[RMDB]
Background
Chemical mapping of a 177-nucleotide RNA with 2A3 and DMS. The RNA was probed in 150 mM KOAc, 10 mM MgCl2 and 150 mM bicine (pH 8.5) at 24 C.
RNA sequence: GGGAACGACUCGAGUAGAGUCGAAAAUAUUAGGAAACUGGGGCACAACAAUAAUACGUGUUCCACAACUUUCAGCGCGGGUGUGUCUUCUUUUCCUGCUUGAGAUAGCGCUAUGUCACUGUUCCUCGGAUCAUUCCUCAUUCGUGAGGAAUGAUCCAAAAGAAACAACAACAACAAC
Reactivity to 2A3 in 0.01 (KOAc 150mM, MgCl2 10mM, bicine 150mM(pH8.5), 24C), signal-to-noise 1, nucleotides 027 to 126: u140a010u030u220a080g020g020a130a110a020c020u030g010g020g000g010c000a010c010a070a070c060a080a060u160a220a140u190a140c110g020u020g020u020u010c030c000a000c020a020a000c030u000u020u030c140a000g010c010g000c000g030g050g000u100g000u010g010u030c000u140u000c000u050u070u000u030c000c000u070g000c010u080u020g030a000g020a040u230a100g020c000g000c020u040a040u170g040u040c090a040c180u010g020u020u010c000c000u000c020
Reactivity to DMS in 0.01 (KOAc 150mM, MgCl2 10mM, bicine 150mM(pH8.5), 24C), signal-to-noise 1, nucleotides 027 to 126: u020a050u000u010a040g000g000a000a040a060c160u010g000g000g000g000c020a040c010a100a110c260a190a080u080a160a110u010a080c100g020u000g030u000u020c020c010a020c070a040a090c070u000u010u000c070a090g000c030g020c120g000g020g010u000g000u000g030u000c020u000u000c040u000u000u000u000c010c000u010g000c050u000u000g010a120g020a120u000a030g010c020g000c020u010a020u040g000u000c080a170c090u000g000u000u010c000c060u000c160